An RNA of 207 nucleotides, treated with 2A3 and read out base by base. The RNA was probed in 150 mM KOAc, 10 mM MgCl2 and 150 mM bicine (pH 8.5) at 24 C.
RNA sequence: GGGAACGACUCGAGUAGAGUCGAAAACGAAACACCAACGACAACAGCUCAACCUGCGACAACGUCUACGCGCCAAUCGGAGUCAAAACGAUCACCCAAGACGGGAAACAAGUACCACUCUACUACCACGACAUCCUACCACAACUGUACGAGCCAGCCGUAUCAUUGGCUUCGGCCAAUGAUACGGAAAAGAAACAACAACAACAAC
Reactivity to 2A3 in 0.01 (KOAc 150mM, MgCl2 10mM, bicine 150mM(pH8.5), 24C), signal-to-noise 2, nucleotides 027 to 156: c060g060a000a000a000c090a030c030c000a110a030c020g070a000c030a170a030c040a030g060c030u070c060a030a060c010c020u040g020c020g060a090c070a100a000c030g060u030c010u070a020c030g060c000g000c030c040a060a050u100c070g030g000a000g070u030c060a020a080a070a080c050g070a070u110c020a060c040c000c010a030a010g100a040c040g060g020g000a070a150a000c020a030a030g110u100a080c030c020a050c060u040c030u040a110c020u010a020c000c020a040c010g000a000c030a070u050c000c020u020a070c000c000a110c000a110a120c030u040g000u070a050c030g040a010g070c050c000a010g010